Chemical mapping of a 177-nucleotide RNA with 2A3 and DMS.
RNA sequence: GGGAACGACUCGAGUAGAGUCGAAAACAAUAUAUGUAUUUGUAGACGAGGAGGAUAGUGAUCGAAUAGAUCGGCGGAUGCUAUCCCGGAUGUGGCUCAUUCGUUAGCUUAUUAAGUAAAACAUUAGUACUCCUCACUCAUUCGUGAGUGAGGAGUAAAAAGAAACAACAACAACAAC
Reactivity to 2A3 in 0.01 (KOAc 150mM, MgCl2 10mM, bicine 150mM(pH8.5), 24C), signal-to-noise 2, nucleotides 027 to 126: c010a000a050u080a060u090a160u110g120u130a140u110u190u070g130u030a010g010a010c030g030a040g000g020a000g000g000a060u000a000g040u060g070a000u040c060g020a040a110u090a180g130a010u020c010g030g010c040g000g070a050u120g020c010u040a030u060c000c000c000g060g080a010u090g050u130g040g000c020u000c090a000u000u000c030g030u050u030a060g010c000u010u010a020u120u030a300a020g080u020a200a000a000a000c130a070u040u060a000g020
Reactivity to DMS in 0.01 (KOAc 150mM, MgCl2 10mM, bicine 150mM(pH8.5), 24C), signal-to-noise 3, nucleotides 027 to 126: c070a100a120u000a110u050a060u010g010u030a040u000u020u000g010u000a140g010a080c080g000a070g030g010a110g030g010a010u010a040g010u020g000a000u000c000g000a150a110u020a170g000a020u010c020g010g000c040g000g010a080u000g020c040u010a020u000c020c040c020g010g000a060u000g000u010g010g010c110u000c040a040u010u000c080g020u000u020a140g010c030u010u010a060u030u020a070a040g010u040a020a030a070a070c170a160u010u060a080g020
It was measured as part of the RMDB libraries RFM100 and RFMREP.
2A3 adducts were read by reverse transcription with SuperScript II with manganese.